Conditions: 150 mM KOAc, 10 mM MgCl2 and 150 mM bicine (pH 8.5), 24 C. This 177-nucleotide RNA was probed chemically with DMS and 2A3. High 2A3 reactivity points to a flexible backbone, as in loops and unpaired stretches.
RNA sequence: GGGAACGACUCGAGUAGAGUCGAAAACUCGAUUGCAUUUCGACGAUACGCUUUGUUUAGAUUCUUAGCGAUCUAUAAAUAAAAUAGACUAAAACAAAAUGUCUAUGUCGGUUUUGCUUUCGAGAAAGGGUAAAGUUAUGUUCGCAUAACUUUACCCAAAAGAAACAACAACAACAAC
Reactivity to DMS in 0.01 (KOAc 150mM, MgCl2 10mM, bicine 150mM(pH8.5), 24C), signal-to-noise 2, nucleotides 027 to 126: c000u020c030g000a000u000u000g080c000a000u010u020u040c000g010a010c040g060a030u000a030c040g000c010u000u000u010g020u040u040u000a090g000a130u050u030c010u030u000a030g030c080g010a080u000c010u000a060u020a100a140a030u030a110a010a060a020u020a000g000a020c000u080a040a000a110a080c190a140a140a210a100u000g010u000c010u000a000u010g030u040c050g010g010u020u000u000u000g000c010u000u000u000c000g000a000g000a060a040a120
Reactivity to 2A3 in 0.01 (KOAc 150mM, MgCl2 10mM, bicine 150mM(pH8.5), 24C), signal-to-noise 8, nucleotides 027 to 126: c000u000c000g000a010u000u010g000c000a000u020u020u020c010g000a000c010g010a010u140a180c020g020c000u030u020u010g150u110u180u060a150g060a240u220u080c010u020u030a020g000c010g030a000u000c030u040a110u060a110a250a040u120a020a060a000a000u010a000g000a000c010u020a030a060a150a050c110a050a110a030a040u110g000u000c000u010a010u020g000u000c000g010g000u010u000u010u050g000c000u000u000u000c000g000a000g020a050a020a010